[RMDB]
RNA sequence: GGGAACGACUCGAGUAGAGUCGAAAAAUCAGAGGGCGCUAUCAUGCAAACCAGGAUUGUCUGCUCAUGCACAGAACCAACUACCGAUAACUAACAGUGCAUGAAGGUUAGUUAUUCCAUAUUAAUUAAAACUCGUAAUUCUUCGGAAUUACGAGAAGAAAAUGAACAUCUUCGGAUGUUCAUUUUCAAAAGAAACAACAACAACAAC
Reactivity to 2A3 in 0.01 (KOAc 150mM, MgCl2 10mM, bicine 150mM(pH8.5), 24C), signal-to-noise 4, nucleotides 027 to 156: a000u070c040a030g060a170g050g030g020c020g010c040u120a120u250c070a050u210g030c030a050a050a070c030c010a030g050g050a080u070u110g050u050c040u050g020c000u000c010a000u010g000c010a000c000a020g060a100a080c070c010a070a070c060u130a100c020c090g030a010u000a000a000c000u000a000a000c010a020g000u010g070c000a010u020g020a030a010g050g000u000u000a000g000u010u010a000u110u020c030c000a040u070a070u290u230a150a090u120u100a050a130a080a090c000u000c000g000u000a000a000u000u000c010u010u020c140g090g000a000a000u010u000a000c000g000a000g010a000a000
Reactivity to DMS in 0.01 (KOAc 150mM, MgCl2 10mM, bicine 150mM(pH8.5), 24C), signal-to-noise 2, nucleotides 027 to 156: a120u020c030a120g020a130g000g020g010c090g060c070u030a100u010c040a090u010g040c020a090a090a050c070c060a160g010g010a090u000u010g020u010c020u000g020c060u000c020a050u010g000c000a040c010a120g010a150a090c070c020a050a100c090u010a180c050c030g000a100u000a020a040c040u000a060a130c020a130g020u000g010c020a020u000g020a050a160g040g020u000u000a010g010u000u000a050u000u020c070c050a130u000a110u020u010a070a110u000u010a050a130a080a210c010u000c020g030u000a020a020u000u000c020u000u000c300g040g020a010a000u000u010a000c010g010a000g000a000a020